[RMDB]
RNA sequence: GGGAACGACUCGAGUAGAGUCGAAAAUGCAGGCUGAGAACGAGCGACUAAACGGUUUGGAGGAUAACUGAUUUAGGGACUUUCUUUAUACCUCUAUAAAAUCGAAGUAAGGCGAUUGAGGGCGAAUUAACUUUUUGGUGUUCGCACCAAAAAGUUAAAAAGAAACAACAACAACAAC
Reactivity to DMS in 0.01 (KOAc 150mM, MgCl2 10mM, bicine 150mM(pH8.5), 24C), signal-to-noise 2, nucleotides 027 to 126: u020g000c060a030g000g040c020u000g000a080g050a040a060c090g000a030g020c000g000a170c010u010a140a100a090c090g010g010u010u000u000g000g070a060g020g000a010u000a050a070c110u010g010a070u000u020u000a030g030g000g000a080c180u000u000u000c040u000u020u000a140u050a080c040c030u000c020u000a040u060a120a030a050a010u020c040g000a020a050g000u000a090a140g010g000c000g000a060u000u000g000a010g000g050g010c080g050a140a070u000
Reactivity to 2A3 in 0.01 (KOAc 150mM, MgCl2 10mM, bicine 150mM(pH8.5), 24C), signal-to-noise 3, nucleotides 027 to 126: u110g000c000a010g020g010c060u070g020a010g010a110a040c050g030a070g060c010g010a020c000u030a040a130a020c040g000g040u010u050u160g090g010a060g040g010a010u020a200a000c030u000g080a150u130u020u190a120g030g000g040a020c000u070u060u030c020u030u130u010a080u060a150c010c000u030c000u030a090u090a180a120a000a000u030c020g000a030a020g120u150a070a030g200g000c000g020a020u000u110g050a080g000g020g000c000g000a010a010u030